[RMDB]
RNA sequence: GGGAACGACUCGAGUAGAGUCGAAAAGAUAUGGAUGUGAUCGAAGAACUAACUCACAUCGGAAACGAUGUGAGGUUAGGGAGAUCACCAUCCUAAGUCAAAAGUUGGUCGGUUCGCCGACCAACAACCCCGUCAUAUAGUUCGCUAUAUGACGGGGAAAAGAAACAACAACAACAAC
Reactivity to DMS in 0.01 (KOAc 150mM, MgCl2 10mM, bicine 150mM(pH8.5), 24C), signal-to-noise 3, nucleotides 027 to 126: g010a040u010a300u000g000g010a010u000g010u010g000a010u000c000g010a070a190g010a140a170c000u000a010a020c020u000c010a010c000a010u000c000g000g010a130a070a160c010g010a000u000g030u000g000a020g010g010u000u000a000g000g000g000a150g010a020u000c000a000c180c180a010u000c010c010u010a050a110g000u010c030a090a090a110a110g000u000u000g000g020u010c020g010g000u010u020c290g020c030c000g010a010c010c010a000a000c000a050a090
Reactivity to 2A3 in 0.01 (KOAc 150mM, MgCl2 10mM, bicine 150mM(pH8.5), 24C), signal-to-noise 2, nucleotides 027 to 126: g030a020u060a040u120g000g000a000u000g000u000g020a010u000c040g120a260a040g020a210a170c030u030a010a000c010u000c020a010c010a010u010c000g020g010a040a050a010c010g000a000u000g010u010g020a010g000g000u010u030a020g010g000g010a020g000a000u010c000a010c040c000a000u000c010c000u020a080a020g030u010c050a190a030a030a020g000u000u010g010g000u010c010g010g060u030u110c300g100c080c000g000a000c010c000a000a000c000a000a020